Conditions: 150 mM KOAc, 10 mM MgCl2 and 150 mM bicine (pH 8.5), 24 C.
Structure probing data (2A3) for a 177-nucleotide construct.
Reactivities are rounded to 0.1 and cut off at 0 and 3.
It was measured as part of the RMDB library OK1LIB.
2A3 adducts were read by reverse transcription with SuperScript II with manganese.

RNA sequence: GGGAACGACUCGAGUAGAGUCGAAAACUACCUCAUAAACGCAGUUUUGAAUCUACGACUACACUUUAUGGAGGAGUGGGACGUGGGAGCGCAAAUGCUACAGAACCUGUAUACUGAAAUAAUAUACCGCUUCUCAGCUUUUCGAAGCUGAGAAGCGAAAAGAAACAACAACAACAAC
Reactivity to 2A3 in 0.01 (KOAc 150mM, MgCl2 10mM, bicine 150mM(pH8.5), 24C), signal-to-noise 1, nucleotides 027 to 126: c010u100a160c000c000u050c040a190u100a000a250a030c210g000c000a070g000u100u100u000u000g300a270a110u070c010u060a000c030g000a070c070u050a000c060a000c000u190u030u060a100u180g300g070a140g000g000a000g010u230g000g010g000a100c120g000u000g000g000g010a040g000c030g000c030a070a070a070u220g000c000u010a010c000a100g010a140a000c000c000u000g070u060a000u000a110c000u110g120a030a030a020u190a110a000u140a000u010a120c000